[RMDB]
RNA sequence: GGGAACGACUCGAGUAGAGUCGAAAACCUCUAAGUCAGAAACGAUUCUAGAAACUGUAAAUUUACUGCUAAGAGCGUGGAUGUUGUAGGUAACAUUAGACUAUGGGGGUGGGAACCCUUGUAGUUUUCAUUAUUUAUCUUUCGAGAUAAAUAAUGAAAAAGAAACAACAACAACAAC
Reactivity to 2A3 in 0.01 (KOAc 150mM, MgCl2 10mM, bicine 150mM(pH8.5), 24C), signal-to-noise 2, nucleotides 027 to 126: c010c010u010c030u050a080a130g040u070c020a020g130a050a160a030c020g060a090u050u060c010u120a030g120a060a230a050c080u070g080u160a040a150a070u200u280u070a050c030u090g090c010u070a250a000g030a020g060c010g020u080g120g040a060u050g020u080u000g010u070a060g060g100u080a030a000c000a060u060u110a020g010a020c000u000a000u040g000g000g000g000g000u020g020g080g000a020a040c000c000c000u000u020g010u000a020g000u000u000u020
Reactivity to DMS in 0.01 (KOAc 150mM, MgCl2 10mM, bicine 150mM(pH8.5), 24C), signal-to-noise 3, nucleotides 027 to 126: c000c010u010c060u020a050a090g000u020c040a050g010a120a140a100c040g010a080u010u000c100u010a050g010a110a120a150c120u010g010u020a050a130a130u010u010u000a040c020u020g010c040u000a090a030g010a060g010c020g010u010g000g010a090u000g000u000u000g020u000a040g000g000u030a020a030c020a060u010u020a120g010a030c010u000a010u000g000g010g000g000g050u000g030g080g000a140a060c000c000c000u000u010g010u000a010g000u010u000u000